[RMDB]
RNA sequence: GGGAACGACUCGAGUAGAGUCGAAAAGGACGGUUCGCCGUCCAAAAAAGCGUACUACAAAGGAGGUCGUUGGGAGUACCGCUCCCAAAUAGGAGCGCGUACGAGGAUCAACGACUACCCACCCUUUGUAUCGCAAAAAGCACCCUUCGGGGUGCAAGCUUAUAAACACGUUCGCGUGUUUAUAAGCAAAAGAAACAACAACAACAAC
Reactivity to DMS in 0.01 (KOAc 150mM, MgCl2 10mM, bicine 150mM(pH8.5), 24C), signal-to-noise 2, nucleotides 027 to 156: g010g020a020c000g010g020u000u000c240g120c040c020g060u000c000c000a000a000a020a090a080a030g000c010g030u000a070c050u000a050c030a030a030a050g020g000a160g020g020u000c040g030u000u010g000g000g000a210g010u000a030c010c000g020c000u000c000c000c030a020a140a090u010a020g020g020a010g000c010g010c110g000u000a000c010g010a120g020g010a070u020c000a040a050c000g010a070c030u000a000c020c000c020a300c100c010c000u000u000u000g000u000a030u000c000g000c030a030a120a080a140a120g000c000a040c000c000c000u000u000c250g030g000g040g010u000g000c020a000a030
Reactivity to 2A3 in 0.01 (KOAc 150mM, MgCl2 10mM, bicine 150mM(pH8.5), 24C), signal-to-noise 3, nucleotides 027 to 156: g010g000a010c020g000g060u050u160c240g030c070c030g010u020c030c040a100a030a000a000a000a010g030c020g010u040a050c010u000a000c020a000a010a000g000g000a020g000g000u000c000g000u000u000g000g000g000a040g000u000a000c000c000g000c000u030c000c020c010a100a130a040u170a030g000g010a000g010c030g000c150g020u010a000c010g010a090g000g030a040u010c000a010a000c000g000a010c000u020a020c010c010c000a040c010c000c010u040u010u020g020u010a020u290c010g000c020a040a030a060a080a000g010c000a000c040c000c000u030u050c220g040g000g010g000u000g000c000a000a010